The record gives the reactivity of an RNA of 207 nucleotides to 2A3 and DMS.
The reactions ran in a buffer of 150 mM KOAc, 10 mM MgCl2 and 150 mM bicine (pH 8.5), at 24 C.

RNA sequence: GGGAACGACUCGAGUAGAGUCGAAAAUGGUCUAUGCGCUCGACGCAUUGCAGGCGAUGGAAUUUUUCAUCAAUACGAUGGGUAACUGGAUGACGGCCAGCCAGAUGUACAGCAUCAGCGUUGACCGCAUGAGCAGCAUGGAUCAAUACGGUACCGGCAUUCCUAAGCAGUUCGCUGCUUAGGAAUGAAAAGAAACAACAACAACAAC
Reactivity to 2A3 in 0.01 (KOAc 150mM, MgCl2 10mM, bicine 150mM(pH8.5), 24C), signal-to-noise 6, nucleotides 027 to 156: u050g000g000u000c000u000a000u000g000c010g010c010u010c020g040a020c020g010c050a020u010u050g030c070a040g120g050c070g040a010u020g050g130a070a170u150u080u050u050u050c000a010u000c000a030a070u060a060c040g030a030u010g060g000g060u070a140a080c030u060g060g060a040u030g070a100c000g020g000c000c000a000g010c000c000a030g020a060u100g020u050a140c060a120g010c000a030u010c050a050g010c020g070u030u040g050a020c000c000g000c010a020u070g010a000g000c050a020g000c000a000u000g000g000a010u010c000a010a010u140a080c080g060g030u080a060c010c010g030g010
Reactivity to DMS in 0.01 (KOAc 150mM, MgCl2 10mM, bicine 150mM(pH8.5), 24C), signal-to-noise 2, nucleotides 027 to 156: u010g020g030u010c000u010a020u000g020c040g010c000u000c010g020a080c020g000c020a080u000u000g010c030a080g020g040c140g010a010u000g000g010a070a210u000u010u000u000u000c020a050u000c040a120a180u010a020c030g010a000u000g000g010g050u000a050a280c080u010g020g000a170u000g000a080c030g000g040c010c020a030g010c000c020a270g020a070u010g010u000a110c230a160g020c040a020u000c000a070g040c050g000u000u020g000a030c000c040g000c010a090u000g010a070g040c030a190g000c030a040u000g010g020a050u000c010a050a050u000a010c020g020g020u040a130c010c020g000g000
Description:
For DMS the reverse transcriptase was MarathonRT. The 2A3 profile rests on 6,702 reads.